[RMDB]
RNA sequence: GGGAACGACUCGAGUAGAGUCGAAAACCAUGCUUCGGCAUGGAAGUUGAUAUGGACCCGGAGGCGCUGACUAGGACGAAUUAGUUUCGGAAACGAAACUAACUAUCCUAGGUGGAGCCUCCAGGGUCCUAAGUCGCGAUCAGGCUUUCGAGCCUAACUCUGAAAUAUUUUUCGAAAUAUUUCAGAGAAAAGAAACAACAACAACAAC
Reactivity to 2A3 in 0.01 (KOAc 150mM, MgCl2 10mM, bicine 150mM(pH8.5), 24C), signal-to-noise 1, nucleotides 027 to 156: c000c000a010u010g000c030u020u140c300g080g000c000a000u000g010g010a080a000g130u230u300g000a000u010a010u180g010g000a010c000c000c000g030g020a010g010g040c060g000c300u300g000a000c000u000a000g000g000a010c050g080a300a300u000u000a000g000u000u000u000c010g010g030a020a100a040c000g000a000a000a000c000u000a000a000c010u030a000u010c010c000u010a000g000g010u040g010g050a000g000c000c000u000c000c000a000g000g000g000u000c000c000u000a000a000g000u000c030g060c010g140a140u100c080a020g010g010c010u180u160u100c300g140a010g000c000c000u060a070a040

Description:
The data come from the RNA Mapping Database (RMDB), library RNAMAK. This 207-nucleotide RNA was probed chemically with 2A3.